[RMDB]
Chemical mapping of a 207-nucleotide RNA with 2A3.

RNA sequence: GGGAACGACUCGAGUAGAGUCGAAAACUUUGGCUACUACCCGGUGGAAACAACUGAAGCUUCAACGCCUUUUUUUCCUAUCUUCUUUAGCACCGGGCUAGGGAGUAAGCCCGUGGAACCUUAGUUUUGUUCCCUCGGGACUUACUUGUGGUUCCUGACUUAAUCUGGUCUUCGGACCAGAUUAAGUAAAAGAAACAACAACAACAAC
Reactivity to 2A3 in 0.01 (KOAc 150mM, MgCl2 10mM, bicine 150mM(pH8.5), 24C), signal-to-noise 2, nucleotides 027 to 156: c010u150u040u150g080g020c060u120a110c000u010a000c050c000c000g000g040u050g010g120a210a080a030c090a080a060c140u110g040a080a010g070c010u240u250c110a120a120c090g070c060c130u030u030u040u030u040u080u040c040c010u120a240u070c040u170u060c000u070u140u130a090g040c000a010c010c010g020g020g000c000u020a030g030g030g010a040g010u010a030a000g080c000c000c000g000u010g010g030a020a000c000c030u050u050a100g040u080u120u150u300g030u000u040c040c000c040u040c010g000g000g080a100c010u000u000a010c000u020u090g040u010g100g000u010u020c050c000u020g010
Source: RMDB library VIROID, as collected in RNAgym. The 2A3 profile rests on 534 reads.